[RMDB]
RNA sequence: GGGAACGACUCGAGUAGAGUCGAAAAAGUCGUAGACCCGAAACCAUGUGAUCUACCCAUGUCCAGGUUGAAGGUGCGGUAAAACGCACUGGAGGACCGAACCCACGUACGUUGAAAAGUGCGGGGAUGAGGUGUGGGUAGCGGAGAAAUUCCAAACCAUUUCCUUCAUCUUCGGAUGAAGGAAAUGAAAAGAAACAACAACAACAAC
Reactivity to DMS in 0.01 (KOAc 150mM, MgCl2 10mM, bicine 150mM(pH8.5), 24C), signal-to-noise 2, nucleotides 027 to 156: a050g000u000c010g030u030a150g000a250c000c010c020g000a100a130a120c040c040a190u000g020u000g000a170u010c000u000a030c010c010c010a060u000g010u010c020c020a150g080g030u010u010g000a300a190g000g010u010g010c010g010g000u000a140a090a070a220c000g000c000a010c010u000g000g000a300g020g000a000c000c000g020a010a210c000c000c010a020c020g040u000a030c060g010u010u000g020a160a080a080a110g030u010g000c000g000g010g040g000a060u020g000a110g010g010u000g010u000g000g000g030u000a030g020c050g030g020a180g000a060a090a180u000u000c020c010a000a120a190c110
Reactivity to 2A3 in 0.01 (KOAc 150mM, MgCl2 10mM, bicine 150mM(pH8.5), 24C), signal-to-noise 2, nucleotides 027 to 156: a000g040u050c040g030u070a030g090a140c000c050c000g080a040a080a030c120c110a200u190g100u150g100a130u030c000u000a010c000c000c000a000u030g070u030c000c030a010g000g000u000u050g020a000a030g020g000u000g000c010g010g000u030a050a080a020a050c000g000c000a010c000u000g000g060a050g110g140a000c000c000g070a010a110c040c000c030a180c040g010u020a000c000g020u060u180g080a080a180a070a070g010u000g000c020g030g060g000g010a000u110g110a100g000g010u010g000u000g000g060g000u000a000g000c000g030g010a030g110a040a190a080u210u000c040c000a070a020a050c000

Overview: Conditions: 150 mM KOAc, 10 mM MgCl2 and 150 mM bicine (pH 8.5), 24 C. An RNA of 207 nucleotides, treated with DMS and 2A3 and read out base by base. 2A3 adducts were read by reverse transcription with SuperScript II with manganese.